[RMDB]
RNA sequence: GGGAACGACUCGAGUAGAGUCGAAAACGAGGAUCUCAUCGGCGAUAGCACAUUACACCAUCACAUAUUAGUAAUGUGAUAAGAUGGUCGUAUGUGAUGGUGACCAUCUUAUCGAUCGUGAGGUCAGGCUACUCGAACAUUUCGAUGUUUGAGUAGCAAAAGAAACAACAACAACAAC
Reactivity to DMS in 0.01 (KOAc 150mM, MgCl2 10mM, bicine 150mM(pH8.5), 24C), signal-to-noise 8, nucleotides 027 to 126: c070g010a160g000g000a000u000c010u000c000a020u040c070g010g000c040g000a060u010a080g010c040a070c010a020u000u010a030c020a110c050c050a030u010c060a030c080a090u020a110u030u030a100g000u010a030a030u000g010u010g000a100u010a050a020g000a000u000g000g010u000c040g020u020a060u010g010u020g010a040u010g000g000u000g010a020c000c000a000u000c000u010u000a010u000c000g020a050u020c060g030u000g000a020g000g010u000c000a100g010
Reactivity to 2A3 in 0.01 (KOAc 150mM, MgCl2 10mM, bicine 150mM(pH8.5), 24C), signal-to-noise 9, nucleotides 027 to 126: c050g030a080g150g010a000u000c000u000c010a090u240c080g020g000c010g020a020u040a030g090c010a000c000a010u030u110a030c020a030c030c020a050u100c030a030c030a050u280a090u150u140a060g030u040a020a020u020g010u020g030a060u040a080a010g000a000u000g010g000u010c030g050u130a090u100g080u050g040a060u090g030g030u030g000a000c000c000a000u000c000u010u010a010u000c010g030a180u040c000g000u000g000a000g000g000u000c010a000g090